[RMDB]
RNA sequence: GGGAACGACUCGAGUAGAGUCGAAAACAGCUACGUUUCGACGUAGCUGAAAAUAAAACAGGCAAGUACGAGCCUGAAAAAGGUACAAAGAUCGAAAGAUCAAAACGGUUCGAUUCGUCGAACCGAACUGCCACUAUGGAUUCGUCCAUAGUGGCAGAAAAGAAACAACAACAACAAC
Reactivity to 2A3 in 0.01 (KOAc 150mM, MgCl2 10mM, bicine 150mM(pH8.5), 24C), signal-to-noise 1, nucleotides 027 to 126: c000a000g000c000u000a010c010g000u010u000u220c250g080a030c000g000u000a000g000c000u000g000a000a000a000a000u140a030a050a030a030c100a000g000g030c020a000a110g010u040a010c040g080a020g010c000c030u000g030a030a000a000a000a020g110g000u060a030c010a040a130a000g000a020u050c000g030a080a030a030g020a010u010c030a030a060a020a050c020g020g000u010u000c000g010a010u000u040c150g040u010c020g080a000a000c020c000g000a030a010
Reactivity to DMS in 0.01 (KOAc 150mM, MgCl2 10mM, bicine 150mM(pH8.5), 24C), signal-to-noise 1, nucleotides 027 to 126: c010a040g050c000u000a000c020g020u030u020u030c250g060a040c000g010u000a020g010c000u000g000a010a050a120a080u010a070a050a090a100c190a030g000g000c000a100a260g030u010a010c030g000a090g010c000c000u010g000a000a000a060a070a110g000g000u040a000c020a070a130a130g000a000u000c000g000a110a060a070g000a000u000c010a090a080a050a110c010g000g000u040u000c000g040a040u000u010c220g040u000c000g000a010a010c000c000g000a000a120